RNA sequence: GGGAACGACUCGAGUAGAGUCGAAAAUGCGAUGAUGAUAAAAUAGCACGAAGGUGCGUGAAGGGCAGUGGACAAAGCAAUGAAAAUUUGUUUUGCCGUGAGCUCUCUUUAAUAAACGACUUCUCCUAACGAUGGACUAUUUCGAUAGUCCAUCGUUAAAAGAAACAACAACAACAAC
Reactivity to DMS in 0.01 (KOAc 150mM, MgCl2 10mM, bicine 150mM(pH8.5), 24C), signal-to-noise 3, nucleotides 027 to 126: u000g050c060g000a030u070g000a080u020g010a160u050a040a060a050a090u020a130g020c030a000c040g000a150a080g030g020u000g020c050g020u010g000a120a030g010g000g040c010a300g020u000g010g000a040c010a010a000a000g000c000a010a000u020g000a080a100a100a200u050u000u000g000u010u000u000u000g000c000c000g000u000g000a140g010c020u000c010u000c000u020u000u010a030a030u010a050a100a090c090g000a120c180u000u000c040u020c020c040u000
Reactivity to 2A3 in 0.01 (KOAc 150mM, MgCl2 10mM, bicine 150mM(pH8.5), 24C), signal-to-noise 5, nucleotides 027 to 126: u210g000c060g050a070u130g020a030u070g040a010u210a100a110a040a060u150a080g000c010a020c020g090a100a020g190g010u030g000c010g020u060g070a030a020g000g000g000c040a010g030u040g000g010a090c010a010a010a000g000c000a020a000u070g090a050a060a080a110u020u000u010g010u010u030u000u020g000c000c000g040u040g010a030g000c000u000c000u010c000u010u080u100a120a110u110a070a110a020c030g060a030c000u040u000c040u040c010c010u010
An RNA of 177 nucleotides, treated with DMS and 2A3 and read out base by base.
The reactions ran in a buffer of 150 mM KOAc, 10 mM MgCl2 and 150 mM bicine (pH 8.5), at 24 C.
Reactivities are given for positions 27 through 126.
For 2A3 the reverse transcriptase was SuperScript II with manganese.
The 2A3 profile rests on 4,109 reads.